[RMDB]
RNA sequence: GGGAACGACUCGAGUAGAGUCGAAAAGAGCGAUCAACCAAGUCGAAGUGAAGUGGAUCACUAAACUGCGUCUACAUUAGUAGUUAAUGAUUACGCAGCCACAAGUGAACGACACACUAGAUCGCGAGGGAAUGCAUUGGUUCGCCAAUGCAUUCCCAAAAGAAACAACAACAACAAC
Reactivity to 2A3 in 0.01 (KOAc 150mM, MgCl2 10mM, bicine 150mM(pH8.5), 24C), signal-to-noise 1, nucleotides 027 to 126: g020a000g000c000g010a000u030c030a060a050c050c050a070a030g080u110c130g090a060a000g030u010g070a200a000g000u030g050g070a070u030c010a010c100u070a010a150a000c010u010g000c000g050u020c110u110a070c050a000u000u000a010g070u050a030g050u070u120a010a000u010g020a100u020u070a000c000g000c010a000g070c010c010a090c070a100a020g000u000g070a100a010c030g070a010c020a000c000a000c050u050a030g000a070u020c020g000c020g000a070
Reactivity to DMS in 0.01 (KOAc 150mM, MgCl2 10mM, bicine 150mM(pH8.5), 24C), signal-to-noise 1, nucleotides 027 to 126: g030a190g000c040g000a080u030c000a090a190c080c090a290a120g000u010c160g000a090a060g020u000g010a090a070g010u020g050g000a120u000c030a040c030u010a040a050a100c000u050g000c000g080u000c130u030a120c000a020u000u000a000g000u010a110g020u000u000a000a000u110g010a300u020u000a020c000g010c010a000g000c030c010a020c150a130a000g000u000g000a020a100c040g010a000c030a090c010a040c040u000a150g000a000u000c000g020c010g010a100